[RMDB]
Source: RMDB library M2RFPK, as collected in RNAgym.
An RNA of 207 nucleotides, treated with 2A3 and DMS and read out base by base.
RNA sequence: GGGAACGACUCGAGUAGAGUCGAAAAUCAAUGGCAUUGUUGGGUGAAAGUUGGAGGAUAAAUCCUCACCAAGAUUUAAAUUAAGCAAGAGAUAUAAGGCCGCUCCUUAUAUUGCGACUUGCUUAAAGAUAUCCGGCAAAGUUCGCUUUGCCGGAAAGUUAGUUAGAAUGUUCGCAUUCUAACUAACAAAAGAAACAACAACAACAAC
Reactivity to 2A3 in 0.01 (KOAc 150mM, MgCl2 10mM, bicine 150mM(pH8.5), 24C), signal-to-noise 1, nucleotides 027 to 156: u120c070a000a070u080g050g020c010a040u100u060g050u020u070g020g040g010u090g050a140a050a020g050u100u110g040g000a000g000g020a030u120a090a160a040u070c020c040u080c010a040c050c000a050a000g010a120u180u280u230a100a220a220u020u010a010a010g000c000a030a000g020a000g000a000u010a000u010a020a010g010g070c110c050g020c110u240c030c000u000u000a000u010a000u000u080g020c070g150a120c020u010u020g000c000u000u000a000a000a000g040a000u170a050u060c000c000g000g040c000a000a000a000g020u040u000c070g000c210u000u000u030g000c000c000g000g000a000a000a000
Reactivity to DMS in 0.01 (KOAc 150mM, MgCl2 10mM, bicine 150mM(pH8.5), 24C), signal-to-noise 1, nucleotides 027 to 156: u020c060a080a150u000g010g040c020a080u000u000g020u000u020g020g000g010u010g000a120a050a070g020u000u000g010g010a110g000g000a120u020a030a090a160u010c030c010u000c020a090c080c040a040a150g010a100u000u010u000a050a040a260u000u000a000a020g020c000a050a000g010a300g000a020u000a010u010a010a030g000g010c110c300g040c200u000c010c000u000u000a010u010a010u000u000g020c020g000a060c040u000u000g000c010u020u010a010a020a080g000a260u010a130u000c000c010g020g030c020a000a030a040g060u000u020c300g000c040u000u010u000g000c010c000g000g000a010a000a050
Annotation: The reactions ran in a buffer of 150 mM KOAc, 10 mM MgCl2 and 150 mM bicine (pH 8.5), at 24 C. DMS adducts were read by reverse transcription with MarathonRT.